Description
Chemical mapping of a 177-nucleotide RNA with 2A3 and DMS. The RNA was probed in 150 mM KOAc, 10 mM MgCl2 and 150 mM bicine (pH 8.5) at 24 C. It was measured as part of the RMDB library 15KREP.

RNA sequence: GGGAACGACUCGAGUAGAGUCGAAAAUACUUAUGUUAUGCACAACUAUGGUAUUGUUGUCUUCUGUGUAUCACUUGUAUGUCUUCAAUCAGGUCUUAUCAAGUGAUGUUAUGUUUGAAGAUGCCCACGAAAUGAACUUCUUCGGAAGUUCAUUUCGAAAAGAAACAACAACAACAAC
Reactivity to 2A3 in 0.01 (KOAc 150mM, MgCl2 10mM, bicine 150mM(pH8.5), 24C), signal-to-noise 2, nucleotides 027 to 126: u010a000c010u090u080a050u200g000u000u060a140u300g090c050a070c010a080a000c000u050a040u100g000g000u000a000u010u050g060u060u120g030u010c000u000u000c010u030g070u040g010u040a000u010c000a010c010u000u000g030u080a100u090g020u040c000u060u100c110a100a300u090c060a070g040g070u010c010u060u080a050u180c000a000a030g020u000g040a030u000g000u010u070a070u050g170u060u170u080g000a000a000g000a010u010g020c000c000c000a030
Reactivity to DMS in 0.01 (KOAc 150mM, MgCl2 10mM, bicine 150mM(pH8.5), 24C), signal-to-noise 2, nucleotides 027 to 126: u000a000c000u000u000a130u000g000u010u000a120u000g030c270a170c240a060a010c010u010a190u000g010g010u000a000u000u000g010u010u000g020u010c000u000u000c010u000g000u000g030u010a040u010c000a010c000u000u000g010u000a090u000g000u000c010u000u010c180a120a070u010c300a000g000g000u000c020u010u010a160u030c030a020a020g010u000g010a020u000g000u000u000a030u010g000u010u010u010g020a010a030g000a040u000g000c020c000c000a130